[RMDB]
RNA sequence: GGGAACGACUCGAGUAGAGUCGAAAAUUGUCAUUAAAUGGUCUUGACCAUGCAUCAUCGUUACACUGUAUGCAAUAUCAUCACCUUGCGCUUCUUUAGCUAACAGGCUUGUUUGUGCUCUAUGCGCGUGCAACAUCAAGUUCGCUUGAUGUUGCACAAAAGAAACAACAACAACAAC
Reactivity to DMS in 0.01 (KOAc 150mM, MgCl2 10mM, bicine 150mM(pH8.5), 24C), signal-to-noise 2, nucleotides 027 to 126: u000u030g020u000c070a070u000u010a050a110a080u010g000g000u000c080u010u010g010a060c030c090a090u000g000c080a030u000c050a020u000c060g000u000u020a080c090a120c080u000g000u000a050u000g000c050a040a020u000a080u000c020a040u000c050a020c030c020u000u000g020c110g000c000u000u000c120u000u000u000a010g020c010u000a000a080c220a080g010g000c080u000u000g000u000u000u000g000u010g020c040u000c070u000a060u020g010c030g000c130
Reactivity to 2A3 in 0.01 (KOAc 150mM, MgCl2 10mM, bicine 150mM(pH8.5), 24C), signal-to-noise 2, nucleotides 027 to 126: u070u050g110u040c020a000u070u190a020a150a050u120g050g000u000c020u060u100g050a040c030c010a010u030g040c010a050u040c000a020u020c020g080u050u070a060c120a000c050u020g010u160a080u000g000c040a060a010u040a060u150c020a020u030c000a020c040c000u040u070g000c000g000c020u080u000c000u090u200u100a060g010c000u000a050a040c020a040g040g110c060u040u110g060u130u040u130g040u040g030c020u000c040u080a040u120g000c040g010c010
The record gives the reactivity of an RNA of 177 nucleotides to DMS and 2A3. Source: RMDB library OK2TST, as collected in RNAgym. Conditions: 150 mM KOAc, 10 mM MgCl2 and 150 mM bicine (pH 8.5), 24 C. For DMS, 1,918 sequencing reads were counted.